[RMDB]
RNA sequence: GGGAACGACUCGAGUAGAGUCGAAAAAAAAAAGAUAUGGAUGCUAGGGAGCGAUUGGUGACGAAUGUAGUUCGGAAACGAACUACACUAUCACGAUCGCUUUGAUCUAGCAUCCUAAGUCAAAAAACAUCUUAUACUGGUUCGCCAGUAUAAGAUGAAAAGAAACAACAACAACAAC
Reactivity to DMS in 0.01 (KOAc 150mM, MgCl2 10mM, bicine 150mM(pH8.5), 24C), signal-to-noise 3, nucleotides 027 to 126: a000a030a080a080a040a050g000a060u000a300u000g010g000a010u010g010c000u000a000g010g000g000a010g010c000g000a030u000u000g030g050u000g000a020c150g030a050a050u000g020u000a010g010u000u010c010g010g000a100a070a210c000g020a020a000c000u000a000c000a010c070u000a230u010c000a000c010g010a000u000c010g010c000u000u000u010g000a070u020c000u000a010g000c000a000u000c000c000u000a010a050g000u010c030a000a050a080a090a070a130
Reactivity to 2A3 in 0.01 (KOAc 150mM, MgCl2 10mM, bicine 150mM(pH8.5), 24C), signal-to-noise 3, nucleotides 027 to 126: a010a010a010a020a010a040g110a050u140a040u130g010g000a000u000g000c010u000a010g000g000g010a000g010c030g010a020u020u080g300g010u010g040a030c080g120a300a110u030g010u020a010g000u000u000c000g000g040a090a060a030c000g000a020a000c000u000a000c000a000c020u030a010u030c000a000c020g010a000u000c100g010c020u020u030u000g000a000u020c000u000a000g000c000a000u010c000c000u000a000a010g000u000c040a030a070a060a020a060a090

This 177-nucleotide RNA was probed chemically with DMS and 2A3. 2A3 adducts were read by reverse transcription with SuperScript II with manganese. The reactions ran in a buffer of 150 mM KOAc, 10 mM MgCl2 and 150 mM bicine (pH 8.5), at 24 C.